[RMDB]
This 207-nucleotide RNA was probed chemically with 2A3 and DMS. It was measured as part of the RMDB library ARCHII. For 2A3, 2,707 sequencing reads were counted. The reactions ran in a buffer of 150 mM KOAc, 10 mM MgCl2 and 150 mM bicine (pH 8.5), at 24 C.
RNA sequence: GGGAACGACUCGAGUAGAGUCGAAAAGGGUUGUGGCAUGCGUUGUGUUGUCACUAUCCCCAGGAUGUGGAAGGCGCGUCCAUCUCAAACCAGGAGUCGACAUUGGGACAUUGUCGUAAGACACUGUACCGAGGUCACUAAGGAAUGGUGAACUGCCCUACACGUGUAGGUUCGCCUACACGUGUAGAAAAGAAACAACAACAACAAC
Reactivity to 2A3 in 0.01 (KOAc 150mM, MgCl2 10mM, bicine 150mM(pH8.5), 24C), signal-to-noise 3, nucleotides 027 to 156: g020g010g000u020u010g000u010g000g000c030a010u060g060c100g080u020u040g040u030g000u030u020g020u000c000a000c020u030a050u170c010c000c020c020a030g060g020a040u110g030u110g040g100a160a080g110g060c030g030c030g060u000c030c000a050u030c070u020c020a100a070a070c000c010a040g100g060a040g090u100c130g030a010c010a060u000u050g000g010g010a000c000a000u020u000g000u000c020g050u120a060a100g010a000c010a000c020u010g000u010a030c000c000g020a000g030g000u010c000a000c020u060a070a060g060g040a090a010u030g000g030u040g030a060a060c030u120g020c020c000
Reactivity to DMS in 0.01 (KOAc 150mM, MgCl2 10mM, bicine 150mM(pH8.5), 24C), signal-to-noise 2, nucleotides 027 to 156: g000g060g040u000u000g030u000g000g010c000a030u000g070c050g030u000u000g030u010g030u020u010g030u000c020a050c010u000a070u000c010c000c000c020a180g020g020a080u000g020u010g000g030a120a090g010g060c040g010c020g000u010c010c010a070u000c010u000c040a050a110a130c010c010a160g000g010a060g030u000c040g050a010c010a100u010u030g000g000g000a020c000a030u010u000g050u000c020g020u010a120a250g000a020c000a030c100u010g010u000a030c000c000g010a010g000g000u000c000a140c030u000a110a130g020g000a090a160u000g000g030u010g000a050a050c090u000g010c030c050